Overview: The record gives the reactivity of an RNA of 177 nucleotides to 2A3 and DMS.

RNA sequence: GGGAACGACUCGAGUAGAGUCGAAAAUAUCAGGGCCUCAUCUUCGUGCUUGUCAUGAUGUUCCUGCCGCGCGGUCUCGUCGGAGAAGCGGUCGAGCGUUUCAGGAACCCGAAGGGUACGGGCAUUACCACCCCAAAAUAUUCGUAUUUUGGGGUGGAAAAGAAACAACAACAACAAC
Reactivity to 2A3 in 0.01 (KOAc 150mM, MgCl2 10mM, bicine 150mM(pH8.5), 24C), signal-to-noise 2, nucleotides 027 to 126: u210a050u090c050a030g020g120g050c010c010u060c030a090u000c010u070u070c030g010u030g090c050u120u120g090u140c030a090u160g100a100u120g040u030u000c000c000u010g000c000c020g000c010g000c050g110g070u000c080u030c130g140u020c040g190g110a170g060a140a030g030c020g010g000u000c000g000a020g050c000g000u010u100u110c020a010g000g040a000a000c010c000c010g030a020a030g000g000g010u040a010c070g000g000g000c010a000u050u050a020
Reactivity to DMS in 0.01 (KOAc 150mM, MgCl2 10mM, bicine 150mM(pH8.5), 24C), signal-to-noise 3, nucleotides 027 to 126: u010a060u010c100a110g010g000g030c030c020u020c090a060u010c050u010u000c050g010u010g020c060u010u020g010u010c060a100u010g020a070u000g000u000u000c000c010u000g000c300c040g010c010g000c040g000g020u000c010u000c010g020u010c160g010g020a120g020a090a150g010c090g010g010u000c050g030a070g020c010g020u000u010u000c010a030g000g000a060a050c010c110c040g010a060a050g020g000g020u010a050c080g000g010g010c170a090u000u010a140

2A3 adducts were read by reverse transcription with SuperScript II with manganese.